Overview
Chemical mapping of a 177-nucleotide RNA with DMS. The data come from the RNA Mapping Database (RMDB), library RFMREP. The reactions ran in a buffer of 150 mM KOAc, 10 mM MgCl2 and 150 mM bicine (pH 8.5), at 24 C.
[RMDB]
RNA sequence: GGGAACGACUCGAGUAGAGUCGAAAAGUCAAGUGCAUGGCCGAGUAGCUAAGUGCGGACGGGAUAAGCGCUGAAAGCAUCUAAGCGCCAAGCCCUUCCCAAGAUGAGUUUUCCCUACAGGUUCGUGCUUGUUCUUGAGGUUCGCCUCAAGAACAAGAAAAGAAACAACAACAACAAC
Reactivity to DMS in 0.01 (KOAc 150mM, MgCl2 10mM, bicine 150mM(pH8.5), 24C), signal-to-noise 1, nucleotides 027 to 126: g010u010c040a080a110g000u000g020c060a030u000g000g010c030c010g010a130g000u000a080g030c090u010a030a060g030u000g000c010g000g010a040c070g000g010g010a070u000a230a180g000c020g030c000u010g000a090a080a160g020c230a030u000c030u000a160a040g010c010g030c000c030a020a100g010c020c000c000u010u020c000c000c020a080a050g000a080u020g010a070g010u000u010u000u010c000c030c000u020a020c120a130g000g000u000u020c000g000u010g000